[RMDB]
RNA sequence: GGGAACGACUCGAGUAGAGUCGAAAAACGCUUCACAAUGUGCGGCAAAGAAACAUUGUUUAUCCAAAGGCACUUCGCAAUGUGUGCUCAAACAUUGCUUAUUCAAACACGCUUCACAAUGUGCGACAAAACUUCACGGUCUUCGGACCGUGAAGAAGUACUCAUAAAGGUUCGCCUUUAUGAGUACAAAAGAAACAACAACAACAAC
Reactivity to 2A3 in 0.01 (KOAc 150mM, MgCl2 10mM, bicine 150mM(pH8.5), 24C), signal-to-noise 9, nucleotides 027 to 156: a000c010g000c010u010u010c010a010c000a000a010u010g000u000g000c010g050g030c110a150a100a060g100a010a050a000c000a000u000u000g080u050u090u110a110u060c020c040a080a070a080g200g000c010a000c010u030u030c030g010c020a010a010u010g010u000g020u010g040c120u130c130a050a050a000c000a010u000u010g000c000u060u130a180u130u110c080a030a090a030c050a010c080g050c030u130u140c090a040c050a160a160u170g040u070g050c020g050a060c080a020a100a040a040c000u000u000c000a000c000g000g000u000c000u020u080c120g080g000a000c000c000g000u000g000a000a000g000a000a000
Reactivity to DMS in 0.01 (KOAc 150mM, MgCl2 10mM, bicine 150mM(pH8.5), 24C), signal-to-noise 2, nucleotides 027 to 156: a030c010g010c020u000u000c050a050c010a030a020u010g050u000g020c000g040g000c030a110a070a100g030a040a020a020c030a010u000u000g030u000u010u000a100u020c130c060a110a120a150g000g000c010a020c020u010u000c090g040c070a140a060u000g060u010g020u000g000c010u000c110a110a080a040c050a040u000u010g000c050u010u010a080u000u010c050a110a150a090c040a080c040g000c080u000u000c100a100c120a060a080u000g000u000g010c040g010a150c080a060a050a070a110c000u000u000c000a010c000g020g010u000c000u000u020c300g050g000a040c000c010g000u000g010a000a010g000a010a080